RNA sequence: GGGAACGACUCGAGUAGAGUCGAAAAUCUCCCUUAGCCAUCCGAGUGGACGUUCGUCCUCCUACGGAUGCCCAGGUCGGACCGCGAGGAGGUGGAGAUGCCAUGCCGACCCGAAGAGGAAAGAAGAGCAGUCGCCAGUUCGCUGGCGACAAAAGAAACAACAACAACAAC
Reactivity to 2A3 in 0.01 (KOAc 150mM, MgCl2 10mM, bicine 150mM(pH8.5), 24C), signal-to-noise 4, nucleotides 027 to 129: u020c010u040c010c010c020u020u140a050g040c070c030a000u000c020c010g020a030g050u030g000g000a010c020g070u140u230c150g030u080c000c010u040c010c050u110a070c000g000g000a000u000g010c010c000c000a040g000g080u030c030g020g060a040c000c000g020c030g010a060g000g000a000g000g010u060g020g030a080g000a030u100g080c030c000a020u070g020c000c000g030a030c000c010c010g010a040a020g030a000g030g000a040a000a000g010a020a010g020a020g000c010a020
Reactivity to DMS in 0.01 (KOAc 150mM, MgCl2 10mM, bicine 150mM(pH8.5), 24C), signal-to-noise 5, nucleotides 027 to 129: u040c100u030c010c000c060u010u030a130g010c120c040a030u020c020c000g020a150g020u000g030g010a000c020g070u080u100c190g020u010c000c020u020c130c060u070a180c030g040g010a020u010g030c110c050c080a070g020g030u010c090g000g040a080c070c140g000c160g020a040g000g050a020g000g000u020g000g000a060g010a080u040g040c000c000a130u020g030c100c030g020a100c020c010c020g000a000a000g030a100g020g060a040a010a010g020a020a080g030a060g030c060a070
This 170-nucleotide RNA was probed chemically with 2A3 and DMS. Source: RMDB library 15KLIB, as collected in RNAgym. The reactions ran in a buffer of 150 mM KOAc, 10 mM MgCl2 and 150 mM bicine (pH 8.5), at 24 C.